[RMDB]
RNA sequence: GGGAACGACUCGAGUAGAGUCGAAAAUGCGCCAGCACGCUGAUAACCCGGUGCACUGGCAGCAGUGGACGCCGCAGGCACUGGCGGAGGCGGCCGCGCGCGCGGUGCCGAUCCUGCUGUCCGUCGGCCCGGUUAGGUAAUUCGUUACCUAACCGGGAAAAGAAACAACAACAACAAC
Reactivity to 2A3 in 0.01 (KOAc 150mM, MgCl2 10mM, bicine 150mM(pH8.5), 24C), signal-to-noise 2, nucleotides 027 to 126: u050g000c020g000c010c000a040g040c060a030c080g040c010u060g050a150u090a230a130c000c010c040g010g040u080g040c060a000c080u030g030g030c010a020g030c010a000g060u150g090g060a050c070g020c050c020g000c060a070g120g020c060a010c160u180g110g010c110g000g000a090g000g000c000g060g000c040c000g000c030g000c010g020c040g000c010g020g040u020g010c010c010g020a080u080c010c010u030g050c000u020g070u050c000c010g020u040c030g040g040
Reactivity to DMS in 0.01 (KOAc 150mM, MgCl2 10mM, bicine 150mM(pH8.5), 24C), signal-to-noise 3, nucleotides 027 to 126: u010g000c040g010c020c030a100g030c080a160c040g010c020u000g020a150u020a110a110c140c070c010g000g020u000g020c020a050c030u010g000g000c030a050g030c010a050g010u000g000g010a070c110g030c010c050g010c040a110g000g020c070a080c070u010g000g010c010g000g010a160g000g020c030g000g000c020c030g000c050g010c160g020c100g030c020g010g010u000g010c010c000g010a140u010c130c010u010g010c010u010g000u000c020c030g000u000c070g000g010